[RMDB]
RNA sequence: GGGAACGACUCGAGUAGAGUCGAAAAACGAAGGCCGGUGAGCAGUAAGCCGGACGGUCCCCUCGCGGCCGAUCCUCUGGAGCUCUGCUCUAAGAUCUUCGCUGCUGAGGCCCGCGCCGCCGCUCUUCCGCGCUGCUAGUCGAGCGGACGUUGGUGGGAGAAUAAUAGGGUUCGCCCUAUUAUUCUCAAAAGAAACAACAACAACAAC
Reactivity to 2A3 in 0.01 (KOAc 150mM, MgCl2 10mM, bicine 150mM(pH8.5), 24C), signal-to-noise 2, nucleotides 027 to 156: a010c030g030a070a000g060g010c030c000g030g000u070g000a050g020c190a090g080u100a060a010g070c060c010g000g010a000c010g000g030u080c040c030c000c010u010c010g000c010g000g020c010c020g000a000u000c010c010u000c010u010g010g000a000g010c040u130c260u300g010c010u000c000u260a130a040g000a010u010c000u180u220c150g000c000u020g010c060u100g010a000g000g000c000c020c000g060c210g020c030c010g010c020c000g000c000u000c000u300u170c010c000g030c090g000c000u030g020c050u030a050g110u060c020g030a040g030c050g010g050a120c040g000u030u040g000g060u040g080g170